[RMDB]
RNA sequence: GGGAACGACUCGAGUAGAGUCGAAAAUCGACGAUUCGUCGUCGAAAAAAAGCGUACUACCAGGUGGCAUUGUCAGAGACUUUCCCAAAUAGGAAAGACUCUCUUGGAUUUAUGCGUAACAUCCUGGUAUCGCAAAAAACUCGCCUUCGGGCGAGAAGCAAGUAACAGGGUUCGCCCUGUUACUUGCAAAAGAAACAACAACAACAAC
Reactivity to 2A3 in 0.01 (KOAc 150mM, MgCl2 10mM, bicine 150mM(pH8.5), 24C), signal-to-noise 1, nucleotides 027 to 156: u010c000g000a000c010g020a030u000u070c300g030u030c000g030u020c130g110a010a010a010a000a000a000a000g030c010g070u100a080c050u030a000c050c000a000g030g000u000g020g010c010a010u000u000g000u000c010a010g010a000g010a010c010u010u000u030c020c000c020a150a220a300u260a050g010g030a000a000a000g010a010c070u000c020u010c000u090u140g030g010a030u000u300u000a010u070g010c000g000u000a020a020c000a280u180c010c000u010g000g000u010a000u010c000g000c000a020a020a020a020a020a020c000u000c000g000c000c000u120u090c290g220g000g000c000g000a000g010a010a000